[RMDB]
RNA sequence: GGGAACGACUCGAGUAGAGUCGAAAAGCGUACUACGCUAACUUGGAUUUAUCACUUUCCCGGUCACUCCCCACCAUGUCCCAAAUAGGACAUGAGGUGACCGCAAGUGAUUGUCAGUUAGCGUAUCGCAAAAUCAAGAUGCUUCGGCAUCUUGAAAGAAAUACGAUAGUUUCGACUAUCGUAUUUCAAAAGAAACAACAACAACAAC
Reactivity to 2A3 in 0.01 (KOAc 150mM, MgCl2 10mM, bicine 150mM(pH8.5), 24C), signal-to-noise 7, nucleotides 027 to 156: g010c010g030u080a100c080u000a000c020g000c000u000a000a000c010u110u210g200g010a060u290u290u140a040u110c000a000c000u010u030u060c030c020c000g000g000u000c000a000c030u100c010c040c020c000a020c010c000a000u000g000u010c030c010c010a160a300a050u220a120g000g000a000c000a000u000g000a000g020g010u000g000a000c000c000g000c020a000a000g000u000g010a010u010u030g000u010c000a000g000u000u000a000g000c000g000u010a010u080c000g000c010a030a030a010a120u010c000a000a000g000a000u000g000c010u060u140c280g150g000c000a000u000c000u000u000g000a010a000a000
Reactivity to DMS in 0.01 (KOAc 150mM, MgCl2 10mM, bicine 150mM(pH8.5), 24C), signal-to-noise 4, nucleotides 027 to 156: g010c020g010u010a060c130u000a000c000g000c000u000a000a010c010u000u000g030g020a050u000u010u000a020u000c000a010c010u000u000u000c110c080c020g080g020u010c000a020c010u000c300c120c050c060a300c190c000a030u010g030u000c000c010c020a040a180a230u000a060g000g010a020c000a010u000g000a220g040g010u000g010a010c000c000g100c040a000a040g020u010g010a030u000u010g000u010c000a040g020u000u000a020g010c020g010u000a000u000c010g000c030a080a060a110a190u000c000a020a020g030a020u000g000c000u010u000c300g060g010c000a010u000c000u000u010g000a010a060a140

Structure probing data (2A3 and DMS) for a 207-nucleotide construct. 2A3 adducts were read by reverse transcription with SuperScript II with manganese. For 2A3, 10,959 sequencing reads were counted.